[RMDB]
RNA sequence: GGGAACGACUCGAGUAGAGUCGAAAACUGAUCUCAGCUAGCUUCCUGACUGAUCGACUUCAGUCGAUCUCGAAGAGGAGACUUCAGCUGACUAGUCUCUCCUCUCUAGGAUCCUGAUCCUCUUCGAUCUCCUAGCUUCGAAGCUGAAGAGGAGAAGUCAUAUGAGCAGCUUCGGCUGCUCAUAUGAAAAAGAAACAACAACAACAAC
Reactivity to 2A3 in 0.01 (KOAc 150mM, MgCl2 10mM, bicine 150mM(pH8.5), 24C), signal-to-noise 2, nucleotides 027 to 156: c040u060g050a070u080c020u000c070a000g040c010u030a000g000c030u080u050c030c010u060g060a090c030u080g010a010u020c000g010a010c010u140u100c250a110g010u010c010g000a000u030c010u020c030g040a060a030g030a040g030g020a050g080a130c080u090u050c080a010g020c010u010g130a020c010u020a030g070u000c000u000c000u000c110c000u020c000u000c020u110a020g030g010a020u020c000c070u060g040a050u010c000c000u010c000u030u000c000g020a060u040c050u070c040c100u040a090g000c060u000u060c040g050a040a040g000c060u140g060a060a020g000a010g000g000a020g040a010a010g070
Reactivity to DMS in 0.01 (KOAc 150mM, MgCl2 10mM, bicine 150mM(pH8.5), 24C), signal-to-noise 1, nucleotides 027 to 156: c050u000g000a100u010c080u000c010a040g040c050u050a080g020c030u000u000c010c030u000g000a090c010u000g000a030u000c010g010a090c010u000u020c160a180g020u000c010g010a020u000c030u000c020g010a190a070g030a090g000g020a130g020a100c070u010u000c060a090g020c060u000g010a240c040u010a080g000u000c080u000c030u000c000c010u000c000u000c110u000a030g020g010a090u000c040c050u020g010a120u020c030c030u000c020u000u000c030g000a050u000c040u000c090c060u010a080g000c070u010u000c040g010a050a070g030c050u000g030a080a040g010a020g020g030a100g000a000a140g050